[RMDB]
RNA sequence: GGGAACGACUCGAGUAGAGUCGAAAAGAUACUCUGGAUGUGAAGGCUGGGACUGGACACUGAUCGGCUGGGCUCUUGCAGAGUGUGUUCAUCAACAGUGGACUGGUGUUGACAAGGCAAGCCUGGAGUCCCAGCAAGCAUUCGUGCUUGCUGGGACAAAAGAAACAACAACAACAAC
Reactivity to DMS in 0.01 (KOAc 150mM, MgCl2 10mM, bicine 150mM(pH8.5), 24C), signal-to-noise 1, nucleotides 027 to 126: g010a130u000a060c020u000c010u010g000g030a110u000g010u010g020a130a090g010g000c050u000g000g000g000a020c050u010g010g010a070c110a060c070u000g000a140u000c080g000g000c030u000g000g000g000c030u000c040u000u000g010c060a120g010a130g010u000g010u000g050u000u000c080a120u000c050a040a130c100a070g010u000g000g010a030c050u010g000g030u000g010u000u000g000a050c090a070a010g030g000c080a040a060g000c040c010u000g010g020a240

The data come from the RNA Mapping Database (RMDB), library OK2TST. Chemical mapping of a 177-nucleotide RNA with DMS. The reactions ran in a buffer of 150 mM KOAc, 10 mM MgCl2 and 150 mM bicine (pH 8.5), at 24 C.